[RMDB]
RNA sequence: GGGAACGACUCGAGUAGAGUCGAAAACUUAGCCAGCAUAUACGCUAUGGAUUUCGAGUUGCAGACAAUACGUCUGUAAUUUGCAAGACGAGUCGUACUGGCUCUGAAGUUACCUACGGGUAGUUCACAGAAGGAUGGGUUUCGACCCAUCCUUCUGAAAAGAAACAACAACAACAAC
Reactivity to 2A3 in 0.01 (KOAc 150mM, MgCl2 10mM, bicine 150mM(pH8.5), 24C), signal-to-noise 4, nucleotides 027 to 126: c020u040u060a020g000c000c000a000g010c050a090u100a010u010a170c040g000c010u070a240u200g040g070a090u010u000u020c000g010a000g020u010u000g000c000a000g010a010c030a130a300u300a280c160g000u000c000u000g000u020a000a000u010u000u010g020c040a020a000g020a020c000g020a000g040u200c010g000u040a010c020u010g000g000c000u000c010u050g090a020a020g040u080u020a020c000c000u040a050c110g050g000g000u030a040g050u030u020c040a020
Reactivity to DMS in 0.01 (KOAc 150mM, MgCl2 10mM, bicine 150mM(pH8.5), 24C), signal-to-noise 2, nucleotides 027 to 126: c010u000u000a000g030c000c050a030g020c300a040u010a270u000a040c090g000c030u000a120u000g000g010a150u010u010u000c010g000a000g050u000u000g000c000a000g000a000c020a180a270u000a100c260g000u000c000u010g010u010a000a000u030u010u000g010c080a070a030g010a080c010g010a070g000u030c010g010u030a130c000u030g000g010c010u000c140u020g020a020a000g010u010u000a030c020c000u000a050c040g000g020g000u010a030g000u060u000c030a060
Chemical mapping of a 177-nucleotide RNA with 2A3 and DMS. It was measured as part of the RMDB library RFM100. High 2A3 reactivity points to a flexible backbone, as in loops and unpaired stretches. For DMS the reverse transcriptase was MarathonRT. The 2A3 profile rests on 2,045 reads. The DMS profile rests on 2,410 reads.